Source: RMDB library OK1LIB, as collected in RNAgym.
Chemical mapping of a 177-nucleotide RNA with 2A3 and DMS.
The RNA was probed in 150 mM KOAc, 10 mM MgCl2 and 150 mM bicine (pH 8.5) at 24 C.
2A3 adducts were read by reverse transcription with SuperScript II with manganese.
The DMS profile rests on 1,289 reads.
Values cover nucleotides 27 to 126.
2A3 is a SHAPE reagent: it acylates the 2'-hydroxyl of flexible nucleotides of all four kinds.
RNA sequence: GGGAACGACUCGAGUAGAGUCGAAAAAAAGUAACAACUCAACAGGUGUUAAAUUUUUGGAUUUUGAAGUAUGGACAGGCGUCAUAGGGAUUGUCAUACCACAAGGUUCACCCCAUUUUGACAAUUCCUUCCCUCGUUUGUUCGCAAACGAGGGAAGAAAAGAAACAACAACAACAAC
Reactivity to 2A3 in 0.01 (KOAc 150mM, MgCl2 10mM, bicine 150mM(pH8.5), 24C), signal-to-noise 2, nucleotides 027 to 126: a000a000a000g060u020a020a020c030a080a000c000u040c180a050a090c070a110g010g030u000g000u010u040a110a110a260u030u060u030u030u020g090g000a050u030u000u020u080g030a100a020g030u110a040u120g090g120a050c030a020g070g030c020g060u110c000a040u150a060g030g020g050a070u050u040g000u000c000a000u000a060c000c010a010c070a170a030g040g020u020u040c000a030c030c020c000c000a010u100u140u030u040g020a000c020a030a020u020u020c000
Reactivity to DMS in 0.01 (KOAc 150mM, MgCl2 10mM, bicine 150mM(pH8.5), 24C), signal-to-noise 1, nucleotides 027 to 126: a000a010a090g000u040a010a100c100a000a020c080u000c190a100a100c220a100g000g010u040g050u000u070a040a030a040u000u000u000u000u020g010g000a040u000u000u000u000g000a020a100g010u040a040u020g000g000a030c130a050g000g000c010g030u020c100a130u010a050g000g000g000a000u000u000g030u000c000a010u000a050c150c160a080c110a100a110g000g010u000u000c140a000c130c000c000c070a020u070u000u000u030g010a000c000a040a010u050u000c010